[RMDB]
RNA sequence: GGGAACGACUCGAGUAGAGUCGAAAAGAAGCAGUCCAUCUUGGAUGAGACGUACAACAACCGGACAGGAGUCGAACGAACCAACGAUGCAGUCAAGGACUGCGGCCUCGGGCACGUUCGCGCCCGAGCCUCGUCACGUAUUCGUACGUGACGAGGCAAAAGAAACAACAACAACAAC
Reactivity to DMS in 0.01 (KOAc 150mM, MgCl2 10mM, bicine 150mM(pH8.5), 24C), signal-to-noise 3, nucleotides 027 to 126: g000a090a160g010c020a110g000u010c000c040a110u020c020u010u000g040g000a060u000g000a110g010a140c030g000u020a080c120a080a100c090a050a110c050c010g000g020a160c130a120g000g020a090g030u000c020g000a070a100c100g020a140a140c040c060a040a070c100g020a080u000g000c030a070g000u020c080a100a130g000g000a040c010u000g020c000g000g000c070c040u000c020g010g000g060c010a030c020g020u010u010c140g030c010g000c000c010c010g000a060
Reactivity to 2A3 in 0.01 (KOAc 150mM, MgCl2 10mM, bicine 150mM(pH8.5), 24C), signal-to-noise 4, nucleotides 027 to 126: g100a040a010g000c030a010g030u000c020c010a020u010c050u080u140g210g020a210u080g080a010g040a060c040g140u190a010c040a110a020c020a070a060c050c070g050g100a040c080a120g000g070a040g040u070c030g030a070a070c030g010a020a030c020c020a040a010c090g040a030u110g050c020a010g080u070c070a140a040g090g000a010c020u000g000c000g000g020c000c010u010c000g010g000g000c060a020c090g080u170u180c080g030c010g000c000c000c000g000a000